RNA sequence: GGGAACGACUCGAGUAGAGUCGAAAAAGUUCAUAUGCCCACCUUUGCUUGUCCGCGGGUGGAUGCCUCAUGGUGCUAUGAAUGCCUAUAAUUGAAAUAUUAUAGAUGCCUAAUUUUCCUCUCUUGAGGAAAAUUAGAUGCAUACAAGGCGGAAGCACACUAUAGCGUAGUUCGCUACGCUAUAGUGAAAAGAAACAACAACAACAAC
Reactivity to 2A3 in 0.01 (KOAc 150mM, MgCl2 10mM, bicine 150mM(pH8.5), 24C), signal-to-noise 4, nucleotides 027 to 156: a010g030u050u030c020a020u080a040u260g010c000c000c000a010c000c000u060u100u150g040c020u080u140g070u100c010c020g010c030g030g000g000u020g020g030a090u080g000c000c010u170c040a130u300g000g030u040g000c000u030a020u060g020a030a020u080g010c000c000u050a050u040a080a040u050u050g060a090a070a060u120a050u090u040a030u050a070g040a070u030g000c000c000u000a000a010u000u010u010u000c000c000u030c010u080c100u120u260g000a000g000g000a000a000a000a000u000u000a000g000a000u070g000c000a020u050a070c050a060a030g110g000c000g010g010a020a000g010c010a000
Reactivity to DMS in 0.01 (KOAc 150mM, MgCl2 10mM, bicine 150mM(pH8.5), 24C), signal-to-noise 3, nucleotides 027 to 156: a080g000u010u000c040a100u010a040u020g000c040c020c000a060c030c020u020u010u010g030c020u010u000g010u020c060c110g060c080g000g030g050u000g010g010a090u000g020c050c040u010c060a170u010g030g050u010g030c000u010a140u000g020a050a080u000g010c060c000u000a020u000a030a050u000u000g000a140a090a170u000a050u010u000a040u000a040g010a110u000g000c020c000u000a010a010u000u000u000u000c000c000u000c000u000c250u010u010g010a020g010g010a000a000a000a010u000u000a020g000a100u010g000c010a050u000a120c060a070a070g000g030c010g030g010a180a150g010c050a210